RNA sequence: GGGAACGACUCGAGUAGAGUCGAAAAUAUUUGGGGGUGCUACCUAAAUUGUGGUCUUGUUUUUAUGACAAGACCCAUGAUCUAUCAGGCUUCCUAGAUCAGUAUGCCAGUAGAGAGCACUGUACACACGUACAUAUGGAUUCGUCCAUAUGUACGUAAAAGAAACAACAACAACAAC
Reactivity to 2A3 in 0.01 (KOAc 150mM, MgCl2 10mM, bicine 150mM(pH8.5), 24C), signal-to-noise 9, nucleotides 027 to 126: u160a050u060u160u070g050g000g000g000g010u020g010c000u040a110c010c000u030a050a070a100u110u070g060u180g020g000u000c010u010u010g070u040u050u020u060u130a260u300g000a000c000a010a000g000a000c000c000c000a000u010g010a000u000c010u020a040u090c060a070g040g000c000u060u030c020c020u050a080g060a250u110c020a010g040u060a030u110g020c020c010a010g020u040a020g020a000g010a000g000c020a000c050u050g140u180a040c120a000c010
Reactivity to DMS in 0.01 (KOAc 150mM, MgCl2 10mM, bicine 150mM(pH8.5), 24C), signal-to-noise 9, nucleotides 027 to 126: u010a070u000u000u000g020g010g000g010g020u000g010c020u000a110c040c040u000a050a070a090u000u000g020u010g030g010u000c000u000u000g010u000u000u010u020u020a110u040g000a000c000a000a000g000a010c010c000c010a010u000g010a100u000c030u000a040u000c090a130g010g010c040u000u000c090c030u000a080g000a080u010c130a060g010u000a050u000g010c040c030a170g010u000a030g010a070g000a040g010c020a020c020u000g020u010a100c150a090c300